[RMDB]
RNA sequence: GGGAACGACUCGAGUAGAGUCGAAAAGCUGAGUAUACCAGGUUAGUUCAUUCUCGUAUGCAUGAUUGGACAAAUUAAAAUCUCAAUUUGGAUCAGGGCCUCCCUCCAGCGACGGCCGAACAUACAAGCACUUGCUUUAAUUCGUUAAAGCAAGUGCAAAAGAAACAACAACAACAAC
Reactivity to 2A3 in 0.01 (KOAc 150mM, MgCl2 10mM, bicine 150mM(pH8.5), 24C), signal-to-noise 1, nucleotides 027 to 126: g010c010u050g010a040g120u040a060u100a180c090c020a030g080g000u110u150a050g080u070u090c040a030u080u000c080u000c030g050u050a090u260g000c050a050u080g040a090u080u050g000g000a000c030a000a070a000u080u120a090a030a160a300u090c080u020c170a040a110u040u090u070g070g010a100u100c070a050g030g000g000c010c000u000c000c000c000u010c050c000a000g020c030g120a080c010g010g050c020c000g000a040a050c030a020u290a080c030a000a030
Reactivity to DMS in 0.01 (KOAc 150mM, MgCl2 10mM, bicine 150mM(pH8.5), 24C), signal-to-noise 1, nucleotides 027 to 126: g000c020u010g010a060g030u000a080u000a050c010c070a050g000g020u000u000a080g020u010u020c120a060u000u000c040u020c110g000u000a000u000g000c000a030u020g000a100u000u000g000g010a080c040a020a080a040u020u010a020a030a070a120u030c050u020c110a100a080u000u000u000g000g000a050u000c020a070g010g010g030c020c020u000c010c000c020u010c090c100a050g030c020g010a080c150g000g000c000c050g000a010a030c120a040u010a070c250a030a190
The record gives the reactivity of an RNA of 177 nucleotides to 2A3 and DMS. The reactions ran in a buffer of 150 mM KOAc, 10 mM MgCl2 and 150 mM bicine (pH 8.5), at 24 C.